[RMDB]
RNA sequence: GGGAACGACUCGAGUAGAGUCGAAAACGGAUCAACUUCGGUUGAUCCGAAAGGGACGGGUCGGGAGGGGGAAACUCGCGGUCCCAAGAAGAAUCCAGACUGAAAGGAAGGUCUUCGGACCUUCCAAUCUACCUAUAGGGUUCGCCCUAUAGGUAGAAAAAGAAACAACAACAACAAC
Reactivity to 2A3 in 0.01 (KOAc 150mM, MgCl2 10mM, bicine 150mM(pH8.5), 24C), signal-to-noise 5, nucleotides 027 to 126: c000g000g010a010u010c000a000a020c010u040u060c170g110g000u000u000g010a000u010c000c010g010a010a000a000g020g000g150a050c080g010g010g100u220c080g020g020g110a230g020g030g000g000g030a030a070a030c010u000c010g020c030g020g030u020c000c000c010a010a020g070a020a010g030a010a030u060c040c020a040g110a150c070u150g070a110a070a060g010g000a000a000g000g000u000c000u020u040c130g030g010a000c000c010u010u000c000c000a000a000
Reactivity to DMS in 0.01 (KOAc 150mM, MgCl2 10mM, bicine 150mM(pH8.5), 24C), signal-to-noise 3, nucleotides 027 to 126: c000g000g010a010u000c000a000a010c000u000u010c190g020g020u000u000g010a010u000c010c000g010a010a080a170g020g000g000a130c100g030g000g000u000c140g020g010g000a120g010g000g000g020g010a020a040a020c050u010c030g000c060g000g000u000c000c000c020a040a080g000a070a070g000a070a120u000c030c060a130g000a120c170u010g030a070a050a120g000g000a020a010g000g000u010c000u010u010c190g010g010a020c000c000u000u000c000c000a010a040
This 177-nucleotide RNA was probed chemically with 2A3 and DMS. Conditions: 150 mM KOAc, 10 mM MgCl2 and 150 mM bicine (pH 8.5), 24 C. For DMS the reverse transcriptase was MarathonRT.